[RMDB]
RNA sequence: GGGAACGACUCGAGUAGAGUCGAAAACUGUGCGCAGACGCGGGCGCGCAGAGCGCAGAGGACUGCGCGCGCUUCUUGCAGGAGGCGCCGCCGCGCGUGGCCGCGGGCGUGCAGGACCGCCUGUGGCAGCUCUUUGGCCGGUACCGCGAGGCGCUGGCCUGUGUAACUGUUUCGACAGUUACACAGGAAAAGAAACAACAACAACAAC
Reactivity to 2A3 in 0.01 (KOAc 150mM, MgCl2 10mM, bicine 150mM(pH8.5), 24C), signal-to-noise 1, nucleotides 027 to 156: c040u030g030u070g060c010g010c000a010g070a290c020g060c000g020g030g000c000g010c000g000c000a010g000a020g050c060g010c060a050g020a140g130g160a100c020u000g000c020g000c010g000c000g010c000u000u020c000u040u300g050c030a090g000g120a000g000g000c000g020c000c000g030c020c010g000c020g000c050g300u060g110g050c000c000g010c030g000g010g000c000g020u060g040c050a030g000g100a020c050c000g040c040c000u000g000u020g060g040c020a030g030c000u060c000u080u110u190g070g000c060c020g000g040u030a050c010c010g020c040g050a020g030g010c000g030c030u010g000g000
Source: RMDB library OK3TST, as collected in RNAgym. Chemical mapping of a 207-nucleotide RNA with 2A3. The 2A3 profile rests on 772 reads. The RNA was probed in 150 mM KOAc, 10 mM MgCl2 and 150 mM bicine (pH 8.5) at 24 C.